[RMDB]
RNA sequence: GGGAACGACUCGAGUAGAGUCGAAAAGAUCUGCGCCGAUCCGAAACGCUAGCAAACAGCCCGCAUCAUGUCGUCUCCUAACUUCGACGUAGUGAAAUACUGAGCUUAUGCGAGUAAGCCUGUUAGCAAUAGAUCAGAACGUUCGCGUUCUGAUCAACAAGGUAAAACGGUUCGCCGUUUUACCUUGAAAAGAAACAACAACAACAAC
Reactivity to DMS in 0.01 (KOAc 150mM, MgCl2 10mM, bicine 150mM(pH8.5), 24C), signal-to-noise 4, nucleotides 027 to 156: g010a080u000c020u000g020c040g030c010c040g010a050u010c030c040g000a090a050a080c100g020c040u000a040g060c020a060a070a080c080a270g020c020c010c020g030c050a090u000c070a110u010g010u000c010g020u000c000u010c060c040u000a070a090c080u000u010c020g020a080c030g010u000a050g000u000g010a130a080a120u000a050c060u000g000a150g030c020u000u000a070u020g010c170g020a190g010u000a040a040g020c010c030u000g020u000u000a100g020c070a090a110u010a080g020a030u000c000a020g000a030a010c010g060u000u020c300g020c020g030u000u000c000u000g010a010u000c000a030a130
Reactivity to 2A3 in 0.01 (KOAc 150mM, MgCl2 10mM, bicine 150mM(pH8.5), 24C), signal-to-noise 7, nucleotides 027 to 156: g040a040u030c010u060g020c040g020c040c020g040a050u040c030c040g050a080a070a020c060g010c040u050a020g040c040a050a050a090c030a060g030c010c010c020g020c020a060u060c020a020u100g060u070c010g010u020c030u040c080c030u090a120a120c040u120u100c070g040a040c050g030u040a040g020u020g120a090a050a010u140a050c040u050g010a010g030c000u030u020a010u060g060c030g020a040g070u040a030a030g010c010c010u030g010u060u050a020g010c040a080a120u050a180g000a000u000c000a000g000a000a000c000g010u040u070c150g010c000g080u000u000c020u000g000a000u000c000a000a010